Chemical mapping of a 177-nucleotide RNA with DMS and 2A3. High 2A3 reactivity points to a flexible backbone, as in loops and unpaired stretches. The 2A3 profile rests on 1,224 reads. The reactions ran in a buffer of 150 mM KOAc, 10 mM MgCl2 and 150 mM bicine (pH 8.5), at 24 C.
RNA sequence: GGGAACGACUCGAGUAGAGUCGAAAAUUCGCGCACCCACCUUUCCCGUCGCAGUCGGCGCCGUCCGAGCGCGGAAAUGUUGCGACAAUAACCCGGCUGGGUUGCGCCGCGUGUUCCGUGCGUGAAACACUCCUGCUCGUUUCGACGAGCAGGAGUGAAAAGAAACAACAACAACAAC
Reactivity to DMS in 0.01 (KOAc 150mM, MgCl2 10mM, bicine 150mM(pH8.5), 24C), signal-to-noise 1, nucleotides 027 to 126: u040u000c070g000c010g000c040a060c010c050c030a280c090c000u000u000u000c010c010c010g070u000c050g010c090a050g020u000c000g010g040c010g050c060c080g010u010c110c110g020a100g010c020g020c000g040g000a030a060a100u000g010u000u010g030c040g010a000c020a120a040u010a060a070c090c020c020g010g000c230u000g000g010g000u010u020g000c110g040c000c020g000c060g000u000g000u000u000c030c110g030u000g000c060g070u000g000a100a130a090
Reactivity to 2A3 in 0.01 (KOAc 150mM, MgCl2 10mM, bicine 150mM(pH8.5), 24C), signal-to-noise 1, nucleotides 027 to 126: u060u040c000g010c000g000c000a030c030c030c010a040c020c020u000u030u010c010c020c010g000u030c000g000c030a040g120u070c060g110g000c050g030c050c010g090u080c000c050g140a070g060c020g000c050g110g000a050a110a010u300g030u090u020g050c020g030a050c030a110a130u150a070a010c010c000c010g000g000c030u070g040g000g040u050u050g040c000g000c000c000g000c020g000u100g120u180u020c060c040g030u080g000c000g020u070g070a000a020a000